Conditions: 150 mM KOAc, 10 mM MgCl2 and 150 mM bicine (pH 8.5), 24 C. An RNA of 170 nucleotides, treated with DMS and 2A3 and read out base by base. The DMS profile rests on 51,010 reads. DMS adducts were read by reverse transcription with MarathonRT.

RNA sequence: GGGAACGACUCGAGUAGAGUCGAAAACUGGACCAAACGCCCGAACCGGGAUGAGCCGCAUGCCGGGCGGGAGGGACGAGGUCGGGGAAGGGGAGACCCCGAGGAGGAUCUCCAGCUAAAGAGUGGAAUACUGCUAUGUUCGCAUAGCAGAAAAGAAACAACAACAACAAC
Reactivity to DMS in 0.01 (KOAc 150mM, MgCl2 10mM, bicine 150mM(pH8.5), 24C), signal-to-noise 5, nucleotides 027 to 129: c060u030g000g000a110c040c060a040a170a170c090g020c020c010c030g000a100a130c000c010g010g010g010a020u030g010a040g000c060c040g030c120a050u000g020c020c040g000g000g000c070g020g030g000a050g000g000g000a090c080g040a100g000g000u020c070g030g010g020g000a110a070g010g000g000g000a070g000a070c090c000c000c000g020a050g010g000a080g000g020a050u000c030u010c010c030a040g030c070u000a050a060a070g030a100g030u030g010g000a090a070u060a150
Reactivity to 2A3 in 0.01 (KOAc 150mM, MgCl2 10mM, bicine 150mM(pH8.5), 24C), signal-to-noise 9, nucleotides 027 to 129: c030u040g020g030a020c030c020a120a070a020c060g010c000c010c000g030a100a050c030c020g020g000g030a080u090g040a020g090c010c030g030c050a030u150g070c010c000g000g010g010c060g010g010g020a120g010g030g010a000c050g040a020g010g070u050c030g010g000g010g010a040a050g050g010g000g000a020g020a020c010c010c010c010g020a040g030g030a040g010g000a020u010c020u000c020c010a030g010c020u110a140a080a010g100a040g030u100g020g050a060a020u110a150

The 2A3 profile rests on 37,743 reads. As a SHAPE reagent, 2A3 marks flexible, mostly unpaired nucleotides at the ribose 2'-OH.